[RMDB]
RNA sequence: GGGAACGACUCGAGUAGAGUCGAAAACUCCCAUCAAAAUCGUUUCAGUCCAAAAUUGAUUCGGCGGCCCUGUCAUGAGGCCGAAACGAAGGCACGUACCCCUUCGAAUGGCGUCGGGGAGUCAGCGAAAGCACUGACCCUUUCGAGGGUCAGUGAAUAUGCUGACAGGAUUCGUCCUGUCAGCAUAAAAAGAAACAACAACAACAAC
Reactivity to 2A3 in 0.01 (KOAc 150mM, MgCl2 10mM, bicine 150mM(pH8.5), 24C), signal-to-noise 1, nucleotides 027 to 156: c030u000c020c000c000a000u100c030a050a160a010a030u050c000g000u000u010u030c070a080g040u050c070c010a030a180a220a140u080u100g040a080u010u060c060g060g010c000g020g000c070c000c020u090g000u100c030a130u090g040a020g090g000c040c000g020a000a000a000c000g010a000a000g000g010c070a010c170g130u180a080c020c010c000c010u030u000c020g030a090a110u090g050g000c050g030u060c060g060g000g000g030a040g020u060c070a000g020c030g060a060a040a020g010c000a000c000u000g000a000c000c030c000u010u040u100c100g080a010g000g000g000u000c000a000g000u000g000a000a000
Reactivity to DMS in 0.01 (KOAc 150mM, MgCl2 10mM, bicine 150mM(pH8.5), 24C), signal-to-noise 1, nucleotides 027 to 156: c100u000c000c000c020a230u000c080a070a040a100a020u000c000g030u000u000u000c010a080g020u000c070c110a050a100a200a150u000u000g000a080u000u000c100g010g050c080g000g000c020c030c010u010g030u020c190a090u030g010a050g040g000c000c030g000a010a020a140c020g000a080a030g010g040c030a140c090g030u010a150c080c040c000c020u000u000c020g020a130a070u000g010g000c080g050u020c030g000g000g040g010a080g030u000c060a110g000c040g000a080a100a080g000c050a010c010u010g010a030c000c000c000u000u000u000c270g010a020g030g010g030u010c010a000g000u000g010a030a040